[RMDB]
RNA sequence: GGGAACGACUCGAGUAGAGUCGAAAAUGUAGGCCAGAGACGAUAUCGGUAUUGAUCGCCUUACCAUAAUUCUGAACGGUUUGCGUGCCACCAUUGAUGUGUGUUUUCUCUGUUGACCCACCAUCAACAGUAGUACCAUAUUCGUAUGGUACUACUGAAAAGAAACAACAACAACAAC
Reactivity to 2A3 in 0.01 (KOAc 150mM, MgCl2 10mM, bicine 150mM(pH8.5), 24C), signal-to-noise 9, nucleotides 027 to 126: u100g020u030a020g030g010c030c040a040g010a010g010a070c050g020a030u020a030u120c090g010g040u060a080u050u160g120a140u120c070g060c070c000u010u020a020c010c010a040u080a150a130u220u060c050u070g060a080a020c040g030g000u020u030u060g010c030g020u030g030c010c010a050c020c020a040u020u100g030a050u030g120u020g010u000g050u050u020u130u010c060u010c010u050g140u110u090g080a110c010c020c000a010c010c010a050u070c030a020a080
Reactivity to DMS in 0.01 (KOAc 150mM, MgCl2 10mM, bicine 150mM(pH8.5), 24C), signal-to-noise 9, nucleotides 027 to 126: u010g020u000a060g010g010c040c040a080g010a090g010a120c130g010a050u000a050u000c090g020g010u000a070u010u010g010a090u000c070g010c040c030u000u000a070c040c030a080u000a060a120u010u000c080u010g010a120a130c130g010g000u000u000u010g010c060g020u000g000c070c040a080c070c060a120u000u000g010a050u000g010u010g010u000g010u000u000u000u000c030u000c060u000g010u000u000g000a090c100c090c040a060c080c060a110u000c070a040a130
Overview: Structure probing data (2A3 and DMS) for a 177-nucleotide construct. DMS adducts were read by reverse transcription with MarathonRT. 2A3 adducts were read by reverse transcription with SuperScript II with manganese. Conditions: 150 mM KOAc, 10 mM MgCl2 and 150 mM bicine (pH 8.5), 24 C.